RNA sequence: GGGAACGACUCGAGUAGAGUCGAAAAUAAAAACACAUCACGUCGAGCGCCGUCGACAUGAGCCUGUGUAGAAACCGCAGUAUCCCUACCACCCCUCCAGACGGAGGUAAGAGGCGGGAGGAAUAAACGGUGAUGAGUACUUCGGUACUCAUUACUGAAAAGAAACAACAACAACAAC
Reactivity to DMS in 0.01 (KOAc 150mM, MgCl2 10mM, bicine 150mM(pH8.5), 24C), signal-to-noise 9, nucleotides 027 to 126: u040a040a070a080a080a030c040a030c050a090u010c030a030c080g010u000c020g010a080g000c090g000c060c060g010u000c010g000a030c040a070u020g000a050g010c140c110u020g010u000g010u000a070g010a070a080a130c030c020g010c110a080g000u020a090u010c020c000c010u000a160c080c040a150c070c090c000c000u000c000c010a170g040a120c220g010g000a010g000g010u020a020a040g010a120g000g010c300g010g000g000a050g000g010a080a030u030a070a110a150
Reactivity to 2A3 in 0.01 (KOAc 150mM, MgCl2 10mM, bicine 150mM(pH8.5), 24C), signal-to-noise 9, nucleotides 027 to 126: u120a000a070a020a020a000c030a000c000a050u050c010a010c030g020u010c010g020a030g030c090g030c050c060g100u030c010g010a010c010a030u040g000a010g070c050c120u060g000u000g010u030a040g120a090a070a010c020c000g000c020a010g050u090a070u060c000c000c000u030a080c010c020a030c020c050c000c000u010c000c000a070g050a250c150g050g010a010g010g000u020a060a030g030a020g030g000c030g020g010g010a040g030g060a090a070u170a150a100a010
An RNA of 177 nucleotides, treated with DMS and 2A3 and read out base by base. DMS adducts were read by reverse transcription with MarathonRT. Reactivities are given for positions 27 through 126.